[RMDB]
RNA sequence: GGGAACGACUCGAGUAGAGUCGAAAAGCAGCACGUGUCUUGUAGGGCACGUAGUGUGUGCCAGGCACUGUGCACACAGUGAGGCCUGAGAGAUAGGGCUCAUGUCCUCGUGGAACUCAGCCUGGGGAUCGCUGGUAGUGUUCGCACUACCAGCGAUAAAAGAAACAACAACAACAAC
Reactivity to DMS in 0.01 (KOAc 150mM, MgCl2 10mM, bicine 150mM(pH8.5), 24C), signal-to-noise 3, nucleotides 027 to 126: g010c060a140g000c060a010c030g010u000g000u000c010u000u000g020u000a160g020g000g020c010a010c010g000u010a040g020u000g030u010g000u000g010c000c010a040g000g000c090a190c060u000g030u000g020c070a130c070a030c000a090g010u000g000a040g010g020c060c030u000g000a070g000a070g010a150u010a120g030g000g000c010u010c080a070u000g000u010c020c000u000c080g030u010g020g010a130a080c040u010c080a100g010c020c000u020g000g000g000g010
Reactivity to 2A3 in 0.01 (KOAc 150mM, MgCl2 10mM, bicine 150mM(pH8.5), 24C), signal-to-noise 3, nucleotides 027 to 126: g060c070a010g050c020a010c030g020u010g020u000c030u120u280g210u270a250g030g000g030c000a000c020g010u020a100g020u030g020u010g000u030g030c030c000a010g040g070c050a030c230u100g030u060g060c040a010c020a010c000a070g120u120g070a010g000g010c000c000u010g030a010g000a000g010a050u170a190g090g100g000c020u010c020a030u130g050u000c010c010u030c040g040u090g020g020a080a050c020u040c060a030g030c000c000u000g000g000g000g020